[RMDB]
RNA sequence: GGGAACGACUCGAGUAGAGUCGAAAAGGCAGGACUUACCAAGUCUGGGGGCCGAUGAGGGUUGGCUCAAAGUAGGGUUUUGACUUGAAACCUCAAGCUGUGACCCCAAAACGAUGGAGGUAAAUGAAAAAUCCAUCUGCCUUCGGGCAGAUGGAAACAGGUAUGUUAUCUUCGGAUAACAUACCUGAAAAGAAACAACAACAACAAC
Reactivity to DMS in 0.01 (KOAc 150mM, MgCl2 10mM, bicine 150mM(pH8.5), 24C), signal-to-noise 2, nucleotides 027 to 156: g040g050c050a110g000g010a060c010u000u000a150c050c080a070a130g040u010c000u010g000g040g040g030g000c050c050g030a150u010g000a090g000g060g070u010u000g010g020c070u010c070a050a030a170g020u010a100g020g000g000u000u000u000u000g000a060c080u000u000g020a070a080a090c110c060u010c010a040a110g010c000u000g020u010g030a070c020c020c010c020a040a050a090a070c060g000a120u000g020g000a080g020g020u000a000a080a130u010g000a030a030a060a110a210u000c000c020a000u000c000u000g000c000c010u000u000c300g030g030g050c000a030g000a000u040g000g000a010a020a020
Reactivity to 2A3 in 0.01 (KOAc 150mM, MgCl2 10mM, bicine 150mM(pH8.5), 24C), signal-to-noise 3, nucleotides 027 to 156: g030g000c040a020g040g000a020c020u050u050a090c100c050a000a070g020u000c030u060g030g010g030g030g000c030c030g030a040u100g020a070g050g020g010u070u140g060g000c030u040c050a070a050a030g080u070a060g000g030g000u030u030u050u110g120a100c040u030u080g020a090a060a060c000c040u030c030a010a020g010c040u060g020u140g140a070c000c000c000c010a020a020a030a020c080g030a030u080g010g040a040g020g030u060a030a080a110u170g080a090a080a020a020a000u020c000c000a000u010c000u000g000c010c010u010u080c090g000g000g010c010a010g010a000u000g000g010a000a010a000

About this RNA:
This 207-nucleotide RNA was probed chemically with DMS and 2A3. The reactions ran in a buffer of 150 mM KOAc, 10 mM MgCl2 and 150 mM bicine (pH 8.5), at 24 C. The data come from the RNA Mapping Database (RMDB), library M2RFPK. 2A3 adducts were read by reverse transcription with SuperScript II with manganese.